RNA sequence: GGGAACGACUCGAGUAGAGUCGAAAAGAUAUGGACGUGGCAUCGAUCUCCCUCGUCGGAAACGACGAAGGAGGGAGCCACAGUCCUAAGUCAAACUGAUGUGUAAUGUUCGCAUUACACAUCAGAAGGCUCUUUAUCUGUUCGCAGAUAAAGAGCCAAAAGAAACAACAACAACAAC
Reactivity to DMS in 0.01 (KOAc 150mM, MgCl2 10mM, bicine 150mM(pH8.5), 24C), signal-to-noise 2, nucleotides 027 to 126: g010a040u000a300u000g000g000a030c000g020u010g000g010c000a300u000c100g000a070u000c010u000c000c000c000u010c000g000u000c000g010g000a100a060a190c020g010a020c000g010a000a010g000g000a030g040g020g020a000g000c000c010a010c020a050g030u000c000c000u000a010a080g000u010c010a090a230a300c000u010g000a010u000g030u000g000u010a000a000u000g000u000u000c230g010c000a010u000u000a000c000a000c000a000u010c000a000g000a090a090
Reactivity to 2A3 in 0.01 (KOAc 150mM, MgCl2 10mM, bicine 150mM(pH8.5), 24C), signal-to-noise 2, nucleotides 027 to 126: g000a020u030a040u110g000g000a020c000g020u010g020g000c050a300u190c270g180a260u060c000u000c010c000c000u000c000g020u000c000g000g010a020a050a020c000g000a000c010g000a010a020g010g000a010g040g100g010a010g000c020c000a000c040a000g000u000c000c010u010a080a020g050u010c040a060a060a130c010u000g000a000u000g010u000g000u020a010a000u010g040u060u050c260g000c170a000u010u010a000c020a000c000a000u000c000a010g000a010a010